[RMDB]
RNA sequence: GGGAACGACUCGAGUAGAGUCGAAAAAUCUCGUAUCCACAAAUAGUAAAUGAGAGAUCUACUGGUGAAAUGGUAUGUCCCAAUAUUAAUGCAUUUAUUUCUAGUAACGUAAACGCAGAUAUUAUAUGGAGCGGACAUCGACGCCUUAGAAAUAAGACUGUAACUGGGAAUUCGUUCCCAGUUACAGAAAAGAAACAACAACAACAAC
Reactivity to 2A3 in 0.01 (KOAc 150mM, MgCl2 10mM, bicine 150mM(pH8.5), 24C), signal-to-noise 3, nucleotides 027 to 156: a000u050c040u000c020g050u090a150u060c030c060a060c070a140a150a080u190a150g090u140a030a070a100u200g030a090g000a000g000a070u000c010u030a020c080u060g040g030u010g050a040a090a150u120g050g060u290a010u040g030u000c000c000c000a010a010u050a030u050u030a100a040u040g020c010a020u010u000u070a040u030u140u070c080u080a130g040u150a120a070c040g020u020a010a010a050c060g010c030a020g070a060u030a040u210u050a050u080a030u200g090g010a060g040c180g000g000a010c010a020u010c010g060a030c040g000c000c000u050u010a000g040a030a130a010u090a040a100g050a020
Reactivity to DMS in 0.01 (KOAc 150mM, MgCl2 10mM, bicine 150mM(pH8.5), 24C), signal-to-noise 1, nucleotides 027 to 156: a220u000c020u000c010g000u010a100u000c040c060a170c090a060a180a120u000a120g000u030a030a110a060u020g010a150g010a090g000a150u000c010u000a010c090u000g000g010u040g010a300a070a000u000g010g020u000a140u010g020u000c000c010c020a050a060u010a040u010u000a110a180u000g030c000a060u000u000u000a010u000u000u000c040u000a120g010u010a090a070c130g020u000a010a040a020c020g040c010a030g000a120u000a060u010u000a050u010a060u010g010g010a130g010c000g010g010a070c010a030u000c000g000a180c120g000c020c010u000u000a070g010a060a070a120u000a070a120g000a200